[RMDB]
RNA sequence: GGGAACGACUCGAGUAGAGUCGAAAAUUUGUGGGACAUUACAGUUAUAAACAAUGUGGACAAUGAAAUUGUUAAGUCUUCAGAUGUUGUAGACAGCAAUGAAAAUUUAACAUGGCCACUUGUUUUACCUAAAUGGUCUGUUCGCAGACCAUUUAGGAAAAGAAACAACAACAACAAC
Reactivity to 2A3 in 0.01 (KOAc 150mM, MgCl2 10mM, bicine 150mM(pH8.5), 24C), signal-to-noise 1, nucleotides 027 to 126: u030u020u040g110u120g010g090g020a050c030a070u050u120a090c020a120g000u190u180a090u070a070a000a000c020a010a060u220g000u010g040g030a000c030a010a180u110g070a040a130a040u040u000g020u010u010a030a010g000u000c000u000u030c010a030g060a300u040g020u060u040g020u070a070g110a210c050a010g000c000a000a030u000g060a010a010a010a010u080u030u000a000a020c030a000u010g000g030c000c000a010c000u020u010g010u020u000u010u000a010
Reactivity to DMS in 0.01 (KOAc 150mM, MgCl2 10mM, bicine 150mM(pH8.5), 24C), signal-to-noise 1, nucleotides 027 to 126: u000u000u010g060u000g000g000g000a090c150a100u000u030a050c110a110g010u020u020a140u010a010a020a000c010a000a010u010g010u000g050g010a070c070a020a120u010g010a050a060a090u010u010g010u000u000a000a010g010u000c030u010u010c010a020g000a140u020g010u000u000g010u000a190g010a180c060a010g000c000a070a150u000g000a000a000a000a010u000u000u000a000a000c010a030u020g010g000c010c000a000c010u020u000g010u000u000u000u000a140
The record gives the reactivity of an RNA of 177 nucleotides to 2A3 and DMS.
Values cover nucleotides 27 to 126.
The 2A3 profile rests on 671 reads.
The data come from the RNA Mapping Database (RMDB), library 15KREP.
The RNA was probed in 150 mM KOAc, 10 mM MgCl2 and 150 mM bicine (pH 8.5) at 24 C.
DMS adducts were read by reverse transcription with MarathonRT.